[RMDB]
RNA sequence: GGGAACGACUCGAGUAGAGUCGAAAAAUAAAUACCCAUAGGGGACCAUAGAAGGAGCGUUCUCGUCGCGGUCCCUGUCAGGCUCGUCCUGUGAAACCUUCUAAAAUAAAAUCUGCCUUACAAAAAAACCUAAAUUAGUCUUCGGACUAAUUUAGGUAAAAGAAACAACAACAACAAC
Reactivity to 2A3 in 0.01 (KOAc 150mM, MgCl2 10mM, bicine 150mM(pH8.5), 24C), signal-to-noise 1, nucleotides 027 to 126: a000u090a010a090a040u090a060c000c000c000a010u100a040g010g020g000g020a000c000c000a050u010a050g030a000a000g040g010a000g020c000g030u130u120c130u090c200g170u050c010g030c000g030g000u000c010c040c000u000g010u020c010a000g020g000c050u100c210g140u220c040c000u050g000u000g050a090a020a020c020c010u090u010c010u090a130a150a230a230u150a000a110a000a110u110c040u140g050c010c020u090u060a030c000a030a190a070a030a080a070